[RMDB]
Structure probing data (DMS and 2A3) for a 207-nucleotide construct. Conditions: 150 mM KOAc, 10 mM MgCl2 and 150 mM bicine (pH 8.5), 24 C. For 2A3, 1,160 sequencing reads were counted. It was measured as part of the RMDB library ARCHII. The DMS profile rests on 3,831 reads.
RNA sequence: GGGAACGACUCGAGUAGAGUCGAAAAACUAACCCUAAUGCAGAGUAAGUGGCUGGGCCUUCCUCACACUGCCUCCCGCUGCGUGAAACCUCGCUGUUUUCUUGGCUAACUUUCAGCGAGGUGAGGCAAGGCGGCAAAAAAAAGUUGGGAGCAGCAACUACUAUAUGCGGUUCGCCGCAUAUAGUAGAAAAGAAACAACAACAACAAC
Reactivity to DMS in 0.01 (KOAc 150mM, MgCl2 10mM, bicine 150mM(pH8.5), 24C), signal-to-noise 2, nucleotides 027 to 156: a110c070u000a110a220c010c010c010u000a060a060u000g020c040a030g000a120g040u000a110a150g010u010g010g000c020u020g030g050g020c040c010u000u000c030c030u010c030a140c080a150c040u010g000c030c000u000c020c010c030g010c020u010g000c170g040u000g010a080a170a070c010c000u000c000g000c020u000g020u010u010u000u000c030u000u010g030g010c040u000a090a050c050u010u000u000c010a060g020c000g000a030g010g020u010g000a070g000g020c000a070a160g010g020c030g010g090c000a010a000a000a040a040a030a030a080g000u000u010g020g020g000a080g040c040a070g000c020a090a200
Reactivity to 2A3 in 0.01 (KOAc 150mM, MgCl2 10mM, bicine 150mM(pH8.5), 24C), signal-to-noise 2, nucleotides 027 to 156: a000c070u060a040a060c020c000c000u060a160a120u110g000c060a010g020a010g080u080a220a000g010u030g050g000c020u020g030g010g000c030c000u030u020c000c010u040c010a060c000a000c020u030g000c000c020u030c010c010c020g020c010u020g010c010g040u070g060a100a020a030c010c000u000c000g010c020u000g030u010u040u040u070c070u070u120g100g000c030u030a040a070c020u050u110u000c000a000g010c010g000a010g000g000u010g040a000g000g020c030a010a020g040g000c010g010g030c070a090a030a000a000a000a010a000a020g070u070u040g020g020g010a030g010c010a010g010c010a030a040